[RMDB]
RNA sequence: GGGAACGACUCGAGUAGAGUCGAAAAUCUGUGCCCUGCCUAUAGGGUGAGAGUAGGGAACUAGUCCUGUGACUUGGGUCAAAAUAGAUGGUUUAAUAGAAUGGCUAGCAGAUCUCUGCUUGGAGCAUGGAGGCUUCUGAUUCCUCACUGCCUCCACAAACCCUAAUUACUUCGGUAAUUAGGGUUUAAAAGAAACAACAACAACAAC
Reactivity to DMS in 0.01 (KOAc 150mM, MgCl2 10mM, bicine 150mM(pH8.5), 24C), signal-to-noise 2, nucleotides 027 to 156: u000c040u000g040u000g000c010c010c010u000g010c110c060u030a140u000a060g000g030g030u010g020a110g000a060g010u000a020g000g020g020a060a070c040u000a080g010u000c010c050u000g020u010g010a090c050u000u010g020g020g010u000c060a060a080a100a110u000a100g010a110u010g010g010u010u000u000a050a120u000a120g000a130a070u000g010g020c020u000a060g000c010a050g010a110u000c050u000c020u000g000c040u010u010g010g010a100g030c030a060u000g000g010a070g010g010c040u000u000c120u000g010a180u000u000c000c040u000c010a060c050u000g000c010c010u000c010c000a020c170
Reactivity to 2A3 in 0.01 (KOAc 150mM, MgCl2 10mM, bicine 150mM(pH8.5), 24C), signal-to-noise 3, nucleotides 027 to 156: u010c030u060g100u120g030c000c010c000u000g010c060c070u160a150u220a150g000g000g040u080g050a040g000a000g010u050a000g000g010g010a010a100c000u010a040g050u040c000c040u070g060u050g060a040c050u070u110g100g000g000u060c040a100a000a030a070u100a080g050a110u070g060g120u050u120u180a090a070u090a060g100a130a080u120g070g000c030u030a010g000c030a030g030a140u010c060u010c010u090g000c000u050u060g050g010a050g030c070a040u080g010g000a020g000g020c020u060u010c010u110g060a110u080u050c000c000u070c010a050c060u030g030c000c000u010c000c000a010c020
Source information: Conditions: 150 mM KOAc, 10 mM MgCl2 and 150 mM bicine (pH 8.5), 24 C. Structure probing data (DMS and 2A3) for a 207-nucleotide construct. The 2A3 profile rests on 1,666 reads. The data come from the RNA Mapping Database (RMDB), library OK3TST. Values are in units of 0.01, from 0 to 300, in steps of 10. Values cover nucleotides 27 to 156.